[RMDB]
RNA sequence: GGGAACGACUCGAGUAGAGUCGAAAAAACAAUGGACCAUCCUUAUGGACAAAGCAGUAAAUCCUUCUAUAAUCGAUAAGAAAGAGUUAGAAGUUGACUUUGUUCCAACUCCGUUGUGCGCGAUGGCUAAUUGCUAUAAUUAUUGGACAGGAGAAAACUGCCUGGUGCCAUUCGUGGCACCAGGCAGAAAAGAAACAACAACAACAAC
Reactivity to 2A3 in 0.01 (KOAc 150mM, MgCl2 10mM, bicine 150mM(pH8.5), 24C), signal-to-noise 1, nucleotides 027 to 108: a000a000c120a030a000u030g070g000a020c000c000a000u010c050c010u040u030a060u060g010g000a000c000a000a000a000g020c010a000g000u080a020a020a020u160c000c020u000u030c000u000a020u000a000a150u030c020g020a020u020a120a100g070a030a020a000g040a000g000u000u000a000g000a040a000g000u010u070g060a110c000u020u000u000g080u050u090c020c000a000a000c000